Source: RMDB library OK3TST, as collected in RNAgym. An RNA of 207 nucleotides, treated with 2A3 and read out base by base. For 2A3, 326 sequencing reads were counted. Values cover nucleotides 27 to 156.

RNA sequence: GGGAACGACUCGAGUAGAGUCGAAAAAAAUCGCCAUUACACGCGCGAUCAUUGGCGCUAUCGCAUCUACAUGUAAAUAUUUUAACGCCAUCGUCCGCACUAUCGAGUUUAAUUUUGAAAAACCACCAUGUAGUCAAUUCGUAUUACAUAAUAGCCACCACGUCUCAACAUUCGUGUUGAGACGUGGAAAAGAAACAACAACAACAAC
Reactivity to 2A3 in 0.01 (KOAc 150mM, MgCl2 10mM, bicine 150mM(pH8.5), 24C), signal-to-noise 1, nucleotides 027 to 156: a000a000a000u070c060g040c000c020a110u150u190a120c120a050c250g260c120g000c000g040a000u060c020a130u080u000g010g000c000g000c040u040a010u120c080g000c020a040u000c050u050a110c120a050u110g010u290a000a280a100u250a160u000u210u110u100a120a040c000g000c000c000a010u050c000g050u020c050c070g110c020a000c110u120a080u190c110g070a000g000u050u100u080a180a140u020u060u070u070g140a060a000a160a160a000c040c000a050c000c000a010u040g010u010a000g070u080c070a100a170u040u040c000g010u030a110u040u100a020c050a010u050a030a140u170a190g040c020c130a050